[RMDB]
RNA sequence: GGGAACGACUCGAGUAGAGUCGAAAAGGUGAAAGCGAAUCGGGGAAGAUAAGCUAGCAGCAAAAAGGAACCGAUUCCCACCAAGUUCGGAAAGAGAUACCGGGCGAGGCGCUGAAGAAAGAAUGUCAAACUCCCGCAAGUUUCGACUUGCGGGAAAACAAUUUAUUGGAUUCGUCCAAUAAAUUGUAAAAGAAACAACAACAACAAC
Reactivity to 2A3 in 0.01 (KOAc 150mM, MgCl2 10mM, bicine 150mM(pH8.5), 24C), signal-to-noise 3, nucleotides 027 to 156: g020g000u040g040a220a030a010g040c090g020a000a010u000c010g000g020g000g030a040a040g030a140u130a110a020g040c030u100a050g080c060a010g010c030a040a070a050a060a070g140g030a030a010c010c000g010a000u010u000c000c000c010a000c000c010a050a020g010u010u040c030g020g020a130a070a030g110a050g020a030u050a090c000c020g010g010g010c010g010a050g020g000c030g000c060u070g020a030a010g040a040a100a020g040a060a080u130g030u080c030a060a050a160c090u020c030c000c000g000c000a000a010g010u060u140u250c150g080a040c000u010u000g000c000g000g000g030a000a000a000
Reactivity to DMS in 0.01 (KOAc 150mM, MgCl2 10mM, bicine 150mM(pH8.5), 24C), signal-to-noise 2, nucleotides 027 to 156: g000g060u010g000a110a130a120g040c070g000a060a050u010c010g030g010g000g000a220a140g000a100u000a090a160g000c000u000a140g090c040a220g060c040a050a090a080a120a090g030g020a190a220c000c020g020a050u000u000c010c020c000a040c000c010a040a300g010u000u040c040g010g010a070a080a080g000a200g010a100u000a040c070c050g000g000g010c050g010a230g050g020c010g000c040u010g000a080a060g010a120a060a100g000a100a120u000g000u000c090a030a090a090c120u000c000c000c000g040c010a000a010g000u000u010u000c210g010a040c010u000u000g000c000g020g000g000a000a000a020